[RMDB]
Conditions: 150 mM KOAc, 10 mM MgCl2 and 150 mM bicine (pH 8.5), 24 C. This 177-nucleotide RNA was probed chemically with 2A3 and DMS. The DMS profile rests on 1,771 reads.
RNA sequence: GGGAACGACUCGAGUAGAGUCGAAAAACAAUCCAUACAUCUAUACUGGCUAUAGGGCACAGUAUACCACUAUGAUGUGCCUGCGGAGUUUCCUUGCGGUUCACAAUGAGUCGUUGAACGUGUGGACAGUACUCAGUGGUUUCGACCACUGAGUACUAAAAGAAACAACAACAACAAC
Reactivity to 2A3 in 0.01 (KOAc 150mM, MgCl2 10mM, bicine 150mM(pH8.5), 24C), signal-to-noise 2, nucleotides 027 to 126: a000c050a030a000u000c030c000a030u040a050c010a050u000c070u090a030u010a040c020u040g010g010c030u040a040u140a300g120g000g000c060a050c020a170g020u000a020u020a010c010c020a160c080u100a080u110g080a050u040g000u020g040c000c020u040g000c010g010g060a070g010u090u080u060c020c000u000u140g040c000g010g020u000u060c010a040c030a130a160u230g010a010g040u010c020g030u030u030g100a070a030c040g000u020g010u010g040g060a040c000
Reactivity to DMS in 0.01 (KOAc 150mM, MgCl2 10mM, bicine 150mM(pH8.5), 24C), signal-to-noise 2, nucleotides 027 to 126: a070c100a100a130u000c010c010a060u010a020c040a100u010c040u000a030u000a040c010u000g000g030c050u000a100u000a150g010g000g040c020a040c000a030g000u000a050u000a060c080c110a100c200u010a060u010g000a100u010g000u000g000c300c030u010g030c070g000g010a120g020u000u010u010c080c040u000u000g020c100g000g030u000u000c040a030c010a010a150u000g010a050g000u000c020g000u000u000g010a020a100c110g000u000g020u000g010g000a080c180
Record summary
The 2A3 profile rests on 1,484 reads. Reactivities are given for positions 27 through 126.